[RMDB]
RNA sequence: GGGAACGACUCGAGUAGAGUCGAAAAUUGCAGUAAACUCUAUCAGGGGUUAACAGGAAGAAAACUAAGUGUACUGGUUGAGGACUUAUCAGUCUUUAACCUCUGUUUACUACUUUUAGGCAAGUCAAACUGACGAUACUUUCGAGUAUCGUCAGUUAAAAGAAACAACAACAACAAC
Reactivity to DMS in 0.01 (KOAc 150mM, MgCl2 10mM, bicine 150mM(pH8.5), 24C), signal-to-noise 3, nucleotides 027 to 126: u000u020g000c080a120g020u030a060a070a040c150u010c070u020a060u050c090a030g020g000g000g050u020u000a040a040c060a050g000g020a140a140g000a040a090a150a060c080u010a060a100g030u000g030u010a060c100u030g000g000u000u000g010a030g010g000a020c010u000u030a140u020c280a070g030u000c000u000u020u000a000a000c000c010u020c070u000g020u000u000u010a040c000u040a030c030u020u000u000u000a060g010g000c090a070a040g000u000c090a030
Reactivity to 2A3 in 0.01 (KOAc 150mM, MgCl2 10mM, bicine 150mM(pH8.5), 24C), signal-to-noise 2, nucleotides 027 to 126: u100u070g010c010a000g040u190a000a110a010c030u020c010u070a020u070c040a020g000g080g000g000u000u010a010a030c020a010g080g070a120a080g070a090a140a040a020c100u180a170a140g180u120g070u230a110c050u060g020g000u000u000g000a010g000g010a000c000u080u120a080u300c160a020g000u000c000u000u010u000a000a000c000c000u030c010u010g000u020u000u000a000c010u000a000c000u010u000u000u070a060g020g000c040a090a060g000u080c080a070
This 177-nucleotide RNA was probed chemically with DMS and 2A3. DMS adducts were read by reverse transcription with MarathonRT. It was measured as part of the RMDB library OK1LIB. Conditions: 150 mM KOAc, 10 mM MgCl2 and 150 mM bicine (pH 8.5), 24 C.